An RNA of 177 nucleotides, treated with DMS and 2A3 and read out base by base. Reactivities are given for positions 27 through 126. The reactions ran in a buffer of 150 mM KOAc, 10 mM MgCl2 and 150 mM bicine (pH 8.5), at 24 C. The DMS profile rests on 3,786 reads. For 2A3, 6,418 sequencing reads were counted. It was measured as part of the RMDB library TTRDES. For DMS the reverse transcriptase was MarathonRT.
RNA sequence: GGGAACGACUCGAGUAGAGUCGAAAAGAUAUGGAGGUCCCAUCCUUCCAACAGCAUUCAUCGGAAACGAUGAAUGACAUGGAAGAAUGGAGACCUCCUAAGUCAAACACUUGGUUCGCCAAGUGAACAGAAGUACCAUGUUCGCAUGGUACUUCUGAAAAGAAACAACAACAACAAC
Reactivity to DMS in 0.01 (KOAc 150mM, MgCl2 10mM, bicine 150mM(pH8.5), 24C), signal-to-noise 4, nucleotides 027 to 126: g000a050u000a300u000g000g000a010g020g010u000c000c000c000a000u000c020c000u000u000c000c000a030a140c220a200g000c000a000u000u000c000a000u000c000g000g000a130a120a270c000g030a010u000g020a020a000u000g000a010c060a240u000g010g020a010a010g010a030a000u000g000g000a180g010a010c000c000u000c000c000u000a000a080g010u000c030a200a150a260c010a000c000u020u000g000g010u000u010c300g030c000c000a000a010g000u000g010a120a270
Reactivity to 2A3 in 0.01 (KOAc 150mM, MgCl2 10mM, bicine 150mM(pH8.5), 24C), signal-to-noise 2, nucleotides 027 to 126: g020a010u070a060u160g000g000a010g000g020u000c000c000c000a020u020c000c010u020u000c010c040a120a090c050a200g060c000a020u010u010c010a000u000c000g030g050a090a070a080c020g020a010u010g000a010a000u010g030a020c010a030u080g000g010a000a010g020a040a000u030g010g010a300g000a080c000c000u000c000c000u000a000a000g000u000c000a020a040a050c010a000c010u000u000g000g050u090u130c200g060c110c000a010a000g010u010g050a120a030